[RMDB]
Source: RMDB library OK3TST, as collected in RNAgym.
The record gives the reactivity of an RNA of 207 nucleotides to DMS and 2A3.
For DMS, 6,467 sequencing reads were counted.

RNA sequence: GGGAACGACUCGAGUAGAGUCGAAAAUGGACGUACGUUUGGCACUUCCAUUUGAUUCCAAGGACGUGGCGCGUGAAUCAACAACAAGUCAAUGUAGUCCAUGUUCAACGCUUCCAAUGACUCAUCAAUCGAGGUAGCCGCGUGACGGUAAUCCUUACAGGACAAUGUAUUUCGAUACAUUGUCCUGAAAAGAAACAACAACAACAAC
Reactivity to DMS in 0.01 (KOAc 150mM, MgCl2 10mM, bicine 150mM(pH8.5), 24C), signal-to-noise 3, nucleotides 027 to 156: u000g000g000a010c020g020u000a020c010g040u000u010u000g040g060c040a140c070u000u010c040c050a150u000u000u000g010a180u020u000c010c050a130a300g010g010a090c040g030u000g000g050c040g010c090g020u000g010a070a040u000c040a060a050c070a080a090c160a080a220g010u000c060a080a070u000g010u020a100g000u000c030c020a050u000g020u010u000c010a060a080c040g000c050u000u000c060c100a120a180u000g000a100c030u000c030a130u000c120a080a110u010c060g010a060g010g010u000a110g000c010c010g050c030g040u000g010a140c060g030g020u000a060a200u000c020c020u010u000a300
Reactivity to 2A3 in 0.01 (KOAc 150mM, MgCl2 10mM, bicine 150mM(pH8.5), 24C), signal-to-noise 5, nucleotides 027 to 156: u050g010g020a010c050g100u090a000c070g060u130u100u130g070g030c040a010c050u080u000c040c000a090u060u010u010g030a040u080u000c050c030a050a050g070g010a020c030g030u060g040g060c030g000c030g070u120g050a020a050u090c050a010a100c010a020a020c030a120a020g040u050c000a030a040u050g010u020a040g030u030c010c000a010u060g020u060u110c060a080a040c070g020c060u120u030c040c010a070a180u140g030a050c040u030c060a120u060c050a140a130u100c130g010a000g010g030u030a020g010c000c000g050c040g080u110g060a060c010g000g020u050a040a060u100c010c010u020u040a060

Conditions: 150 mM KOAc, 10 mM MgCl2 and 150 mM bicine (pH 8.5), 24 C.